[RMDB]
RNA sequence: GGGAACGACUCGAGUAGAGUCGAAAACAGCUUCCGUGUAUCCUGAGAGGCUGGCGCUGCUGGGGCUUUACCAUCUCCUUGCACUGAGUCCUCGUUCUCUCGCCCCCUUUUCACGCGGCAACUGCCGGGGUUCAACGUGGUUCGCCACGUUGAACCCAAAAGAAACAACAACAACAAC
Reactivity to 2A3 in 0.01 (KOAc 150mM, MgCl2 10mM, bicine 150mM(pH8.5), 24C), signal-to-noise 2, nucleotides 027 to 126: c020a030g070c010u130u000c050c040g090u030g000u070a090u080c040c040u030g020a040g000a000g130g010c020u000g010g050c040g010c060u120g010c000u030g000g000g000g010c000u080u050u020a030c080c020a060u050c090u100c040c000u000u120g000c030a000c110u060g100a080g030u010c000c010u000c020g090u070u020c010u000c000u020c080g000c000c000c020c020c020u060u010u020u110c080a090c140g070c060g030g000c040a120a160c080u160g010c000c000g000
The record gives the reactivity of an RNA of 177 nucleotides to 2A3. Reactivities are given for positions 27 through 126.